[RMDB]
RNA sequence: GGGAACGACUCGAGUAGAGUCGAAAAGCAUCUUGCUUCGGCAAGAUGCAAAUAACGGUCAGUGCUUGGAGCUAGUCGUAAAUGCUAACUGGCCUUACGCUAAAACGAAUGCGUUCGCGCAUUCGAACAAUACUGUGCCGUUCGCGGCACAGUAUUGAAAAGAAACAACAACAACAAC
Reactivity to 2A3 in 0.01 (KOAc 150mM, MgCl2 10mM, bicine 150mM(pH8.5), 24C), signal-to-noise 3, nucleotides 027 to 126: g030c000a000u000c000u010u000g000c000u030u040c110g060g000c000a000a010g010a000u010g000c010a000a000a000u020a020a010c030g000g010u010c000a010g010u000g070c030u120u200g080g040a050g030c040u090a040g190u130c060g090u090a080a100a050u160g020c020u050a070a090c010u020g000g000c000c000u000u030a060c080g000c040u130a040a040a020a050c010g000a000a010u010g010c000g020u010u040c300g010c010g000c050a000u000u010c000g000a030a000
Reactivity to DMS in 0.01 (KOAc 150mM, MgCl2 10mM, bicine 150mM(pH8.5), 24C), signal-to-noise 3, nucleotides 027 to 126: g050c000a000u010c000u010u000g020c000u000u010c180g010g000c010a010a030g000a000u000g010c010a010a050a040u020a050a040c230g020g020u000c010a040g000u000g020c090u010u000g020g000a240g010c060u000a110g010u000c130g000u010a110a090a060u010g010c010u000a120a040c060u000g010g010c000c050u000u000a060c120g020c110u000a030a040a140a140c030g000a010a010u010g000c010g030u010u000c220g020c000g030c000a010u000u000c000g010a090a090
Structure probing data (2A3 and DMS) for a 177-nucleotide construct. Values cover nucleotides 27 to 126. In probing experiments dimethyl sulfate is read out at A N1 and C N3, which are open when not base-paired. It was measured as part of the RMDB library M2PK50. The reactions ran in a buffer of 150 mM KOAc, 10 mM MgCl2 and 150 mM bicine (pH 8.5), at 24 C.